Chemical mapping of a 207-nucleotide RNA with DMS and 2A3.
The reactions ran in a buffer of 150 mM KOAc, 10 mM MgCl2 and 150 mM bicine (pH 8.5), at 24 C.
The 2A3 profile rests on 7,371 reads.
DMS adducts were read by reverse transcription with MarathonRT.
2A3 adducts were read by reverse transcription with SuperScript II with manganese.
Source: RMDB library OK3TST, as collected in RNAgym.
RNA sequence: GGGAACGACUCGAGUAGAGUCGAAAACUAUCAUGUCCAAGGACAAGCCCACCAUUGAUGUGAAGAUGAUGAAUAUGGAGGCUACCAACCUGGCGGAGGUCCGCAGUUAUUGCUAUCUGGCUACCGUCAGCGAUCUCUCCACCAAAGCUGCAUGCCCCCUGUAUGCAUUAUUCGUAAUGCAUACAGGAAAAGAAACAACAACAACAAC
Reactivity to DMS in 0.01 (KOAc 150mM, MgCl2 10mM, bicine 150mM(pH8.5), 24C), signal-to-noise 3, nucleotides 027 to 156: c030u010a110u010c050a150u000g040u010c050c030a120a180g020g020a100c040a100a140g000c040c010c010a110c060c000a110u000u000g010a080u020g030u020g000a070a140g010a070u000g020a080u000g010a110a120u010a090u000g040g010a130g000g010c070u000a100c050c030a040a120c040c010u020g010g000c050g000g020a300g050g010u000c010c150g000c040a060g030u010u000a090u000u010g000c030u000a070u020c080u010g030g020c010u000a110c040c040g000u000c010a050g000c060g010a070u000c040u000c010u020c010c010a050c010c040a020a100a210g010c000u000g000c040a060u010g010c000c020c070
Reactivity to 2A3 in 0.01 (KOAc 150mM, MgCl2 10mM, bicine 150mM(pH8.5), 24C), signal-to-noise 8, nucleotides 027 to 156: c070u080a090u220c050a080u110g030u010c030c030a050a110g070g010a050c050a080a040g050c030c010c010a070c030c020a100u040u140g060a080u100g120u060g090a060a060g040a070u130g010a020u050g040a080a080u110a070u160g010g020a020g030g000c020u040a080c050c020a010a040c010c010u020g020g000c020g010g000a060g030g050u060c030c050g000c020a020g040u150u170a190u260u230g010c010u050a160u210c050u080g030g000c010u080a150c010c010g030u020c010a000g010c010g030a050u040c050u010c000u000c070c000a020c010c000a060a060a030g040c050u050g010c030a040u100g010c010c000c000